Record summary
This 207-nucleotide RNA was probed chemically with 2A3.
RNA sequence: GGGAACGACUCGAGUAGAGUCGAAAAAGCGCCACGCUCAGCUACGUGCUCGCCAGAGGCCGGGCGGACCUGAUCCCGGAGCUGACCUACACCCUGCAGGGCGUGAAGACGGAGAUAGACGCGAUCAUCUGGUACGGCGGCAAUGUGCAGCACAGCCCCCGAGGAUUGGAUUCGUCCAAUCCUCGGGAAAAGAAACAACAACAACAAC
Reactivity to 2A3 in 0.01 (KOAc 150mM, MgCl2 10mM, bicine 150mM(pH8.5), 24C), signal-to-noise 1, nucleotides 027 to 156: a000g070c080g030c020c020a090c090g070c040u140c060a040g020c010u130a050c080g020u090g010c040u060c070g070c020c000a030g040a020g210g000c020c050g000g010g060c060g060g050a050c050c060u120g040a040u060c000c050c000g000g010a070g010c040u060g030a000c000c000u100a080c060a060c000c000c070u120g060c150a130g130g000g000c060g020u090g060a030a040g040a000c080g000g000a080g010a050u150a060g020a030c010g040c030g050a060u060c020a090u010c090u090g000g010u020a040c030g000g000c010g010g000c030a000a110u070g030u080g010c000a000g080c030a000c010a060g040c070c040

Description
It was measured as part of the RMDB library OK3TST.